[RMDB]
RNA sequence: GGGAACGACUCGAGUAGAGUCGAAAAGCUAGAACUAUUAAACUUAGACCUGAGGAUAGAUAUGUUCGUGUGCUAGAUUUGCUACAUAUUGUGCGUAGUAUAAGGCAGAAAGGACACGCUGGUCUUACCCAAUAUACCACUUCGGUGGUAUAUUGGGAAAAGAAACAACAACAACAAC
Reactivity to DMS in 0.01 (KOAc 150mM, MgCl2 10mM, bicine 150mM(pH8.5), 24C), signal-to-noise 3, nucleotides 027 to 126: g020c030u010a060g010a300a070c030u000a040u000u010a050a130a100c090u010u010a020g020a040c070c040u010g020a300g000g000a080u000a040g000a160u020a060u000g020u000u010c010g000u020g000u000g000c030u000a050g030a150u000u000u000g010c000u000a040c130a060u000a120u010u010g020u000g000c110g000u010a010g030u000a030u010a100a250g000g010c010a020g010a090a100a300g010g000a020c020a040c040g030c080u000g000g000u010c000u000u000a090
Reactivity to 2A3 in 0.01 (KOAc 150mM, MgCl2 10mM, bicine 150mM(pH8.5), 24C), signal-to-noise 3, nucleotides 027 to 126: g070c050u110a050g030a090a020c050u050a100u300u200a150a100a050c030u020u080a050g010a030c000c020u020g030a050g110g050a130u100a160g080a030u080a100u160g070u030u050c020g020u100g000u010g100c000u020a030g000a300u040u080u090g000c010u020a020c000a070u140a110u160u230g090u070g190c120g030u010a000g000u020a050u020a110a030g000g000c010a000g110a090a080a010g010g010a030c020a000c070g040c020u030g030g000u010c000u010u020a030